[RMDB]
Conditions: 150 mM KOAc, 10 mM MgCl2 and 150 mM bicine (pH 8.5), 24 C. An RNA of 177 nucleotides, treated with 2A3 and DMS and read out base by base. Source: RMDB library OK2TRN, as collected in RNAgym. For DMS, 17,882 sequencing reads were counted. Values cover nucleotides 27 to 126. High DMS reactivity at an A or C suggests that its Watson-Crick edge is free.

RNA sequence: GGGAACGACUCGAGUAGAGUCGAAAAGGGUGUGUACCGGGCCUUCGUGGACAACUACGGAGUUGCCAUGGAAAUGGCUGAGAAGUGCUGUCAGGCCAAUGCUCAGUUUGCAGAAAUCUCCGAGGUAAUACUAUUCCUGUUUCGACAGGAAUAGUAUAAAAGAAACAACAACAACAAC
Reactivity to 2A3 in 0.01 (KOAc 150mM, MgCl2 10mM, bicine 150mM(pH8.5), 24C), signal-to-noise 5, nucleotides 027 to 126: g040g020g020u080g000u030g010u080a070c020c020g020g030g010c010c000u010u030c010g000u010g020g050a080c040a230a110c060u110a060c040g070g050a030g020u060u130g010c000c020a020u060g020g020a030a110a080u140g010g000c010u030g010a010g010a120a080g070u140g150c030u080g140u280c100a070g030g000c000c020a040a050u130g000c010u000c030a030g000u050u080u110g000c020a020g060a110a120a050u050c060u040c030c030g030a050g090g030u100a070
Reactivity to DMS in 0.01 (KOAc 150mM, MgCl2 10mM, bicine 150mM(pH8.5), 24C), signal-to-noise 9, nucleotides 027 to 126: g010g000g030u000g010u010g010u010a070c040c060g010g000g010c060c040u000u000c040g030u000g000g000a130c250a070a110c020u010a110c110g000g000a050g010u010u010g010c010c010a020u010g010g010a070a120a080u010g000g000c010u010g000a070g000a070a110g010u010g010c020u000g000u010c260a100g010g010c030c040a070a080u000g010c010u000c030a040g010u000u000u000g010c090a090g000a070a090a090u010c030u000c010c030g010a130g010g000u000a080